[RMDB]
The data come from the RNA Mapping Database (RMDB), library OK1LIB.
Chemical mapping of a 177-nucleotide RNA with 2A3 and DMS.
RNA sequence: GGGAACGACUCGAGUAGAGUCGAAAAUUGCUGGAGUGAGAUUUGGCUGUUUUAUGCCUCUUAGCCUGGACAGUGAUCUGACAAUGUACCUAAAGGACAAGGCACUUGCUGCUCUCCAAAGGGAAUGCGAUGGGUGAACAUUCGUGUUCACCCAUCGAAAAGAAACAACAACAACAAC
Reactivity to 2A3 in 0.01 (KOAc 150mM, MgCl2 10mM, bicine 150mM(pH8.5), 24C), signal-to-noise 3, nucleotides 027 to 126: u110u080g020c000u050g100g000a030g000u030g030a130g020a140u110u100u100g060g000c020u020g130u070u100u050u060a060u100g000c020c000u000c020u060u120a050g030c000c000u000g000g040a010c030a040g020u010g060a050u020c030u060g000a060c020a030a130u170g020u150a160c000c010u080a170a080a050g000g010a010c080a100a060g020g000c020a020c060u100u230g030c060u050g010c020u000c000u000c000c000a060a050a010g030g010g000a160a000u090g050
Reactivity to DMS in 0.01 (KOAc 150mM, MgCl2 10mM, bicine 150mM(pH8.5), 24C), signal-to-noise 2, nucleotides 027 to 126: u020u010g020c000u000g030g000a130g020u000g010a080g000a060u000u020u000g000g030c000u000g000u020u060u010u020a040u030g040c060c010u000c060u000u060a100g010c030c030u010g000g000a060c090a080g030u010g000a070u020c040u000g000a120c110a050a060u020g020u010a090c010c020u000a060a100a160g000g000a030c090a070a120g000g000c000a000c050u000u000g030c010u000g020c030u020c040u000c000c050a030a160a100g010g000g000a080a110u040g010